[RMDB]
RNA sequence: GGGAACGACUCGAGUAGAGUCGAAAACAAAGAGAUGCAGAAUGCUAUGGUUUGUUAAUCCGUAGAAUAUUCUUGUGUUUCUGUGUAUCAGUUUGGAAGUGCAUCUGCUUCUGAGAUGCUCAUUUGGCAUUGUUUUUACGUUCGCGUAAAAACAAUGAAAAGAAACAACAACAACAAC
Reactivity to DMS in 0.01 (KOAc 150mM, MgCl2 10mM, bicine 150mM(pH8.5), 24C), signal-to-noise 6, nucleotides 027 to 126: c030a060a080a020g000a010g010a010u000g020c000a010g010a020a010u000g010c000u000a010u000g010g010u000u000u010g020u010u010a100a060u010c010c000g020u000a010g000a080a100u010a020u000u000c000u010u010g050u000g010u000u000u000c000u000g010u000g020u000a080u010c090a070g010u000u000u000g000g000a050a060g010u010g010c110a060u000c070u000g010c110u000u000c110u000g010a050g000a020u000g000c020u010c050a120u000u000u010g010g020
Reactivity to 2A3 in 0.01 (KOAc 150mM, MgCl2 10mM, bicine 150mM(pH8.5), 24C), signal-to-noise 4, nucleotides 027 to 126: c020a000a080a000g000a000g000a010u030g000c000a000g010a020a010u010g000c000u000a010u010g010g120u050u110u110g180u140u240a100a050u030c010c000g020u010a000g010a130a140u120a020u080u040c080u110u080g000u000g000u040u000u000c000u000g040u000g020u030a120u090c070a130g080u040u230u220g070g020a050a050g000u020g040c050a100u030c060u110g060c010u190u030c070u120g060a030g000a020u030g000c010u020c050a130u040u080u130g070g000